[RMDB]
RNA sequence: GGGAACGACUCGAGUAGAGUCGAAAAAAGUUCAUCUGAUGGUAAACAAAUUGCACAUUUCAAUUGCCUUUUCUGGUUUUCUUGAUUCCAUGACAUUGAAUUUAUGAGUUAUCUUUAAGCUUUGUUAUGGCUUGUAGGUGGUAAAAGAAGAGAGAAACACCCUCUACUAAUUCGUUAGUAGAGGGUGAAAAGAAACAACAACAACAAC
Reactivity to DMS in 0.01 (KOAc 150mM, MgCl2 10mM, bicine 150mM(pH8.5), 24C), signal-to-noise 2, nucleotides 027 to 156: a040a080g010u000u000c040a050u000c060u000g010a090u000g020g000u000a040a080a060c040a050a100a060u000u010g020c070a110c070a130u000u000u000c050a070a120u000u000g020c030c000u000u000u000u000c040u000g020g010u010u000u010u000c060u000u000g010a220u000u000c020c020a060u000g040a000c020a050u000u010g000a060a090u000u000u000a080u000g010a130g000u000u000a070u000c030u000u010u010a070a060g020c020u000u000u000g030u000u000a040u000g010g030c120u010u000g030u000a040g030g020u010g010g040u000a030a050a070a120g020a050a090g030a160g010a110g010a130a020a180
Reactivity to 2A3 in 0.01 (KOAc 150mM, MgCl2 10mM, bicine 150mM(pH8.5), 24C), signal-to-noise 4, nucleotides 027 to 156: a000a000g070u070u040c010a060u020c030u050g020a030u030g020g010u050a020a100a040c050a010a110a050u100u110g050c050a040c050a110u060u120u080c090a100a060u080u040g020c020c000u110u120u030u070c100u040g000g040u030u050u090u050c010u050u090g060a100u130u000c010c000a000u030g010a000c010a040u000u040g070a130a100u070u150u120a110u160g030a030g110u070u140a070u150c020u040u080u060a050a000g020c000u040u050u000g010u030u040a030u040g000g000c030u040u030g020u020a020g020g030u010g030g030u100a030a070a020a020g080a020a030g090a000g120a010g030a110a030a000

The data come from the RNA Mapping Database (RMDB), library OK3TST. Chemical mapping of a 207-nucleotide RNA with DMS and 2A3. The RNA was probed in 150 mM KOAc, 10 mM MgCl2 and 150 mM bicine (pH 8.5) at 24 C.